[RMDB]
Record summary:
The record gives the reactivity of an RNA of 177 nucleotides to DMS.

RNA sequence: GGGAACGACUCGAGUAGAGUCGAAAAAGGAACGAAACACCGGUAGUUUGAACUUUGGUAUCGGUUACGGUACUGAAAGUGGUGUGAGCUUCCAGGUUGGUGUGCAGCAGGAUAACUGGCUGGGUACCGAAACGUCGAAAUUCGUUUCGACGUUUCGAAAAGAAACAACAACAACAAC
Reactivity to DMS in 0.01 (KOAc 150mM, MgCl2 10mM, bicine 150mM(pH8.5), 24C), signal-to-noise 2, nucleotides 027 to 126: a130g000g010a030a060c050g010a290a110a020c020a020c000c000g030g020u000a130g000u000u000u040g000a140a090c050u000u000u000g020g000u000a000u000c000g020g010u000u020a060c030g050g000u000a000c000u030g000a010a010a020g020u010g000g020u000g020u000g000a280g000c230u000u020c000c000a100g010g010u000u000g010g000u000g010u010g000c020a030g020c020a050g000g000a080u020a080a140c060u000g040g020c050u010g000g030g020u010a020c060